[RMDB]
RNA sequence: GGGAACGACUCGAGUAGAGUCGAAAAAGCAGCGAUGACUUAACGGCGAUGAACACCGGGUACGAAACCUGCUACACUUGCGGCCGCUGCGCGGAUGCCACGAACCCACAGCCUCUCCAGGAGCGCUCUUCGAUCUCAUCUUCGGAUGAGAUCGAAGAAAAGAAACAACAACAACAAC
Reactivity to 2A3 in 0.01 (KOAc 150mM, MgCl2 10mM, bicine 150mM(pH8.5), 24C), signal-to-noise 1, nucleotides 027 to 126: a030g040c040a030g030c020g140a160u170g000a060c070u020u090a050a000c040g000g000c010g080a120u050g040a120a000c000a020c050c000g030g000g030u050a040c050g000a080a160a000c000c040u020g040c030u040a010c000a080c110u080u150g020c010g000g000c000c030g020c010u020g010c050g000c020g050g050a030u060g020c000c000a080c030g000a090a080c020c000c010a000c000a030g010c030c000u020c020u010c000c030a010g020g000a000g030c030g000c010u000
Structure probing data (2A3) for a 177-nucleotide construct. Values are in units of 0.01, from 0 to 300, in steps of 10. The RNA was probed in 150 mM KOAc, 10 mM MgCl2 and 150 mM bicine (pH 8.5) at 24 C.